Source: RMDB library TTRDES, as collected in RNAgym. This 177-nucleotide RNA was probed chemically with 2A3 and DMS.

RNA sequence: GGGAACGACUCGAGUAGAGUCGAAAAGAUAUGGAAUUCUCUUGAGAUCAACAGCAACGCUCGGAAACGAGCGUUGACAUGAUUAACAAGAGGAAUUCCUAAGUCAAAACCGGCGUUCGCGCCGGAAGCAUAUUCUCUACUUCGGUAGAGAAUAUGCAAAAGAAACAACAACAACAAC
Reactivity to 2A3 in 0.01 (KOAc 150mM, MgCl2 10mM, bicine 150mM(pH8.5), 24C), signal-to-noise 3, nucleotides 027 to 126: g020a020u080a070u150g000g010a010a030u030u030c030u000c000u020u020g080a110g010a160u100c070a060a220c030a160g090c000a020a000c010g050c010u010c000g060g000a080a070a060c010g000a000g000c010g000u000u010g010a000c000a050u030g000a000u080u150a260a120c020a010a020g040a190g000g130a020a000u010u000c000c010u020a130a030g030u010c020a000a030a160a230c000c000g000g000c000g020u080u090c280g010c020g000c190c000g010g020a000a000
Reactivity to DMS in 0.01 (KOAc 150mM, MgCl2 10mM, bicine 150mM(pH8.5), 24C), signal-to-noise 3, nucleotides 027 to 126: g000a050u000a300u010g000g000a020a000u000u000c000u000c000u000u020g010a300g010a040u000c020a060a170c280a160g000c000a010a000c020g010c000u000c010g000g000a100a080a180c000g020a020g020c000g010u000u000g000a020c040a150u000g020a030u010u010a110a220c040a010a020g000a040g020g020a010a060u000u000c000c000u000a020a120g000u010c030a170a080a140a160c000c000g000g000c000g000u010u030c240g030c030g010c000c010g000g000a010a030
The reactions ran in a buffer of 150 mM KOAc, 10 mM MgCl2 and 150 mM bicine (pH 8.5), at 24 C. For DMS the reverse transcriptase was MarathonRT.